[RMDB]
RNA sequence: GGGAACGACUCGAGUAGAGUCGAAAAGAAAAGAGCGUAAUCGCGUCUUGACGUGAGUGAGCCUAGACUGUAGACUAUCCCAAGUGGGAUAGUAUAGCUCACAAUACGCUGAUCUACAGUCAAAAGAAUUAAUCCUCGCUUUCGAGCGAGGAUUAAUAAAAGAAACAACAACAACAAC
Reactivity to DMS in 0.01 (KOAc 150mM, MgCl2 10mM, bicine 150mM(pH8.5), 24C), signal-to-noise 3, nucleotides 027 to 126: g000a060a040a070a040g000a010g020c000g020u000a010a300u000c070g020c010g000u000c100u000u100g010a040c030g000u000g030a020g000u030g000a000g020c010c120u000a130g000a030c000u000g010u020a010g020a020c000u000a010u000c020c000c010a300a300g030u050g000g000g020a010u000a000g000u000a020u030a060g000c000u000c000a000c000a110a130u000a030c000g050c000u000g020a060u000c000u000a020c000a010g010u000c020a190a050a100a090g000a130
Reactivity to 2A3 in 0.01 (KOAc 150mM, MgCl2 10mM, bicine 150mM(pH8.5), 24C), signal-to-noise 1, nucleotides 027 to 126: g130a000a050a010a000g010a010g010c000g000u010a060a020u060c000g010c000g040u040c080u190u240g110a000c000g020u010g000a030g000u000g000a000g000c000c000u020a040g000a010c010u010g000u000a000g000a000c000u000a000u010c030c000c020a110a210g300u300g040g000g000a000u000a000g000u000a040u000a000g010c000u000c000a000c000a000a020u050a000c010g010c010u050g080a050u000c000u000a000c000a000g020u000c000a040a030a000a050g160a000